Source: RMDB library TTRDEL, as collected in RNAgym. An RNA of 177 nucleotides, treated with DMS and read out base by base. DMS adducts were read by reverse transcription with MarathonRT. Conditions: 150 mM KOAc, 10 mM MgCl2 and 150 mM bicine (pH 8.5), 24 C. For DMS, 868 sequencing reads were counted.

[RMDB]
RNA sequence: GGGAACGACUCGAGUAGAGUCGAAAAGAUAUGGAGCGGAUGCAGGCGAAGAACUCGGAAACGAGGGAGCCUAUAUCUCGCUCCUAAGUCAAACUCAGGGCGUAGGCUUCGGCCUACGCCCUGAGAAGUAUACCGUAUUCUUCGGAAUACGGUAUACAAAAGAAACAACAACAACAAC
Reactivity to DMS in 0.01 (KOAc 150mM, MgCl2 10mM, bicine 150mM(pH8.5), 24C), signal-to-noise 1, nucleotides 027 to 126: g000a090u010a300u020g020g010a030g030c030g000g020a040u010g040c120a000g000g030c000g040a120a110g050a080a160c010u000c000g000g020a090a090a280c010g010a010g020g000g000a080g000c010c040u000a050u000a000u010c030u000c010g000c000u030c000c010u010a010a110g000u000c040a060a110a230c030u000c000a010g020g000g020c000g010u020a010g020g010c010u010u000c240g030g030c000c010u070a000c040g030c000c000c020u000g010a000g010a010a100